This 207-nucleotide RNA was probed chemically with DMS and 2A3. It was measured as part of the RMDB library M2RFPK. Reactivities are rounded to 0.1 and cut off at 0 and 3. Values cover nucleotides 27 to 156. For DMS, 1,329 sequencing reads were counted.

RNA sequence: GGGAACGACUCGAGUAGAGUCGAAAACAUGGGGAACUACAUCUGUGUCGCGAGUUCGAUUCUCGCCAGGGCCUGGUCCUGUAGCUCAGUUGGUAGAGCAAGCUGUUCCACGGACACUUGUCGUCAUAAAAGUUGCCCCCGUUCGCGGGGGCAACAAGUCAAUGAUGAGGUUCGCCUCAUCAUUGACAAAAGAAACAACAACAACAAC
Reactivity to DMS in 0.01 (KOAc 150mM, MgCl2 10mM, bicine 150mM(pH8.5), 24C), signal-to-noise 1, nucleotides 027 to 156: c030a150u010g000g010g010g000a060a080c020u000a080c050a130u000c120u000g040u000g010u000c050g010c020g000a070g030u000u000c080g000a300u010u000c020u000c010g030c070c040a130g000g020g000c020c060u000g020g020u000c060c080u070g030u010a070g030c000u000c030a130g000u010u000g040g040u000a060g000a120g040c050a070a050g000c040u010g000u030u000c000c070a040c030g010g000a060c000a120c190u000u000g030u000c000g000u010c040a090u020a050a050a100a210g070u010u010g000c000c000c080c000c000g000u000u000c120g020c210g000g020g010g040g000c030a000a000c000a010a130
Reactivity to 2A3 in 0.01 (KOAc 150mM, MgCl2 10mM, bicine 150mM(pH8.5), 24C), signal-to-noise 1, nucleotides 027 to 156: c040a100u150g010g000g000g000a030a080c010u090a020c050a110u010c050u050g020u020g120u170c080g020c010g000a020g000u050u050c040g030a060u080u000c020u010c010g010c030c010a010g000g040g040c020c120u210g060g020u060c000c010u000g030u090a010g000c020u020c030a040g010u080u090g140g060u060a000g010a000g060c000a010a020g000c060u030g090u120u030c000c030a020c040g040g000a010c010a030c050u060u050g030u090c040g060u060c050a050u140a140a080a000a010g000u000u010g000c000c000c000c000c000g000u010u010c090g000c050g140g000g020g010g000c020a000a000c000a000a000